[RMDB]
RNA sequence: GGGAACGACUCGAGUAGAGUCGAAAAGAUGAUUAGUUCGCUAAUCAUCAAAGAACGCUGCAACGCGCAGAGAGCGCGCGAGAGCGACAAUGCGCGAAGAAAAAAGUUACGGGUUCGCCCGUAACAAGGAAAUACCAUACUUCGGUAUGGUAUUUCCAAAAGAAACAACAACAACAAC
Reactivity to 2A3 in 0.01 (KOAc 150mM, MgCl2 10mM, bicine 150mM(pH8.5), 24C), signal-to-noise 2, nucleotides 027 to 126: g010a010u010g000a000u010u010a000g050u040u040c120g000c100u000a000a010u020c000a010u000c020a000a000a020g060a100a010c040g020c130u160g040c070a110a060c000g030c000g000c060a000g030a010g020a020g120c050g030c000g010c060g170a080g030a010g090c020g000a030c010a020a080u040g000c030g010c030g060a070a090g100a090a180a010a030a000a010g010u010u000a000c000g000g000g050u010u080c220g030c030c020c000g000u000a000a000c000a010a000
Reactivity to DMS in 0.01 (KOAc 150mM, MgCl2 10mM, bicine 150mM(pH8.5), 24C), signal-to-noise 2, nucleotides 027 to 126: g000a000u000g000a020u000u000a000g000u010u010c240g030c010u010a000a010u000c010a000u000c010a020a140a060g010a210a130c070g020c090u010g000c090a070a180c020g020c000g020c000a100g010a270g020a110g000c040g010c010g000c030g020a170g010a100g000c010g000a050c020a090a130u010g000c030g000c000g020a030a160g000a010a030a030a070a120a040g000u000u000a020c000g010g000g000u000u010c260g030c000c000c000g000u000a000a000c000a080a070
Structure probing data (2A3 and DMS) for a 177-nucleotide construct. For DMS, 1,374 sequencing reads were counted. The 2A3 profile rests on 3,021 reads.